[RMDB]
RNA sequence: GGGAACGACUCGAGUAGAGUCGAAAAUCGAAACUGAAUUCCGUCAGUUCAACGCUGGAAACCUGUUGAAUCGCAAUAUGGUCAAGGACCGGGAGUUAUAAGACGGGGCUCCGGGAUCGAGCGAUCCGAAGUUAGCAUAGUUCGCUAUGCUAACUUCAAAAGAAACAACAACAACAAC
Reactivity to DMS in 0.01 (KOAc 150mM, MgCl2 10mM, bicine 150mM(pH8.5), 24C), signal-to-noise 4, nucleotides 027 to 126: u010c020g010a050a050a110c040u010g000a070a090u020u010c000c030g010u010c020a090g000u040u010c070a050a050c100g000c040u000g030g000a080a150a050c060c020u010g010u010u000g010a060a100u010c110g000c080a060a100u020a090u030g010g010u000c030a080a120g020g030a050c020c000g020g000g020a110g000u000u000a080u030a090a090g000a010c030g010g020g000g000c050u000c020c050g000g000g000a140u000c010g020a040g020c150g000a040u020c100c030
Reactivity to 2A3 in 0.01 (KOAc 150mM, MgCl2 10mM, bicine 150mM(pH8.5), 24C), signal-to-noise 9, nucleotides 027 to 126: u080c010g020a020a010a030c040u060g010a010a050u120u050c020c010g020u020c020a050g010u080u060c060a080a020c070g010c060u060g040g030a070a070a090c010c020u060g060u070u050g090a120a070u070c050g000c130a050a080u090a110u300g040g000u020c050a070a040g060g020a060c010c000g030g040g020a180g020u050u050a190u030a200a020g030a010c010g000g000g030g010c010u050c070c030g020g000g010a030u030c020g010a020g080c080g050a030u010c020c030